Chemical mapping of a 177-nucleotide RNA with DMS and 2A3. High DMS reactivity at an A or C suggests that its Watson-Crick edge is free. Conditions: 150 mM KOAc, 10 mM MgCl2 and 150 mM bicine (pH 8.5), 24 C. For 2A3, 31,705 sequencing reads were counted.

RNA sequence: GGGAACGACUCGAGUAGAGUCGAAAACGGGGUACGAGGGAUUGUAAAGGCUCACUGGGUCUACAGUCCCGUACCCAUAGACUACUUUUGAACUAGACCCAGUGAGCCUUUAGUCAGAAGUGGUCAAGGAACACGGAGAUUUCGAUCUUUGUGUUCCAAAAGAAACAACAACAACAAC
Reactivity to DMS in 0.01 (KOAc 150mM, MgCl2 10mM, bicine 150mM(pH8.5), 24C), signal-to-noise 5, nucleotides 027 to 126: c110g000g000g010g010u000a020c030g010a140g020g000g000a040u010u010g010u010a000a010a010g000g000c000u000c000a040c010u000g000g000g010u000c000u000a020c050a040g000u000c000c020c010g000u000a010c020c020c020a030u020a030g010a040c010u010a020c020u000u010u010u010g000a060a040c100u000a010g000a000c000c000c000a020g020u030g000a000g010c000c000u000u000u000a010g010u010c030a070g000a030a040g010u010g000g000u010c080a170a170
Reactivity to 2A3 in 0.01 (KOAc 150mM, MgCl2 10mM, bicine 150mM(pH8.5), 24C), signal-to-noise 7, nucleotides 027 to 126: c020g010g000g000g000u020a010c020g050a290g050g050g010a010u010u020g010u010a010a010a000g010g000c000u010c090a100c040u010g000g010g000u000c000u010a010c000a000g010u000c010c000c000g000u000a000c000c000c000a000u090a010g000a000c000u010a000c000u000u010u010u030g000a020a010c010u000a000g000a000c000c000c000a040g040u080g090a000g000c000c000u000u000u000a000g000u000c000a000g000a030a000g010u010g000g000u010c020a020a050